The record gives the reactivity of an RNA of 170 nucleotides to 2A3 and DMS. For DMS, 78,445 sequencing reads were counted. Source: RMDB library 15KLIB, as collected in RNAgym. DMS adducts were read by reverse transcription with MarathonRT. Reactivities are rounded to 0.1 and cut off at 0 and 3.
RNA sequence: GGGAACGACUCGAGUAGAGUCGAAAAAGGAGGACACGGACGACAAACCGUAGGUACUCUUGCCCUUUAUUGUUGGGUGCACCCUGGGACCCAGUAAUACCCGGGGGGAGGCGGGGUUAACCCAUACUGAGCUAUCAGUUCGCUGAUAGCAAAAGAAACAACAACAACAAC
Reactivity to 2A3 in 0.01 (KOAc 150mM, MgCl2 10mM, bicine 150mM(pH8.5), 24C), signal-to-noise 6, nucleotides 027 to 129: a000g030g000a010g000g010a010c010a000c010g030g040a050c060g050a020c130a030a110a010c020c010g020u040a070g000g090u160a030c010u010c000u010u070g020c010c000c000u040u120u050a160u050u120g070u030u050g010g000g010u030g010c030a070c020c010c000u000g010g010g010a030c000c010c020a010g020u070a020a050u090a210c010c010c020g010g000g000g000g000g020a040g000g060c020g000g000g000g000u040u100a050a040c000c000c000a010u070a080c060u070g050a030
Reactivity to DMS in 0.01 (KOAc 150mM, MgCl2 10mM, bicine 150mM(pH8.5), 24C), signal-to-noise 9, nucleotides 027 to 129: a020g000g000a020g000g030a130c100a000c020g020g020a050c070g010a150c300a090a090a040c020c010g020u030a080g030g000u020a110c020u000c020u030u020g020c000c040c000u030u020u020a080u050u020g030u020u000g000g000g020u020g010c070a090c000c000c000u000g000g000g000a080c020c020c030a090g010u020a050a060u040a110c010c000c010g020g010g010g010g000g010a050g030g000c040g000g000g000g000u020u020a110a090c040c000c030a060u030a070c050u010g000a300